The data come from the RNA Mapping Database (RMDB), library TTRDEL.
Chemical mapping of a 177-nucleotide RNA with 2A3 and DMS.
For 2A3 the reverse transcriptase was SuperScript II with manganese.
High DMS reactivity at an A or C suggests that its Watson-Crick edge is free.
DMS adducts were read by reverse transcription with MarathonRT.
The reactions ran in a buffer of 150 mM KOAc, 10 mM MgCl2 and 150 mM bicine (pH 8.5), at 24 C.
For 2A3, 3,079 sequencing reads were counted.
The DMS profile rests on 2,119 reads.
RNA sequence: GGGAACGACUCGAGUAGAGUCGAAAAGAUAUGGAGUGAAGUAGGGAGUUCCGUCGGAAACGACGGACGACGAUCUACCACUCCUAAGUCAAAGCCGGUACCAUGGGUUCGCCCAUGGUACCGGCAACAUUCUUGAAUUGUUCGCAAUUCAAGAAUGAAAAGAAACAACAACAACAAC
Reactivity to 2A3 in 0.01 (KOAc 150mM, MgCl2 10mM, bicine 150mM(pH8.5), 24C), signal-to-noise 1, nucleotides 027 to 126: g000a000u070a060u200g000g000a000g030u010g050a300a100g050u050a010g020g010g030a050g030u050u030c020c010g010u000c000g040g070a050a040a010c000g000a000c000g000g010a000c030g020a020c010g000a010u030c010u000a010c020c010a020c000u010c000c000u010a090a010g030u000c030a090a050a080g010c040c020g000g050u030a040c010c010a020u030g150g000g010u060u110c300g100c030c000c020a010u010g000g000u020a010c010c000g020g000c020a000a000
Reactivity to DMS in 0.01 (KOAc 150mM, MgCl2 10mM, bicine 150mM(pH8.5), 24C), signal-to-noise 2, nucleotides 027 to 126: g010a030u000a300u010g010g000a020g020u010g010a130a150g000u000a000g010g000g020a300g010u000u010c010c000g020u000c000g000g010a090a100a210c000g020a020c000g000g010a030c210g000a040c090g010a200u010c000u000a000c000c000a020c000u000c000c000u010a000a040g010u010c020a080a120a130g020c010c000g000g000u020a010c000c000a010u000g000g000g010u000u010c290g000c030c000c000a000u000g020g000u000a000c000c010g010g000c000a000a020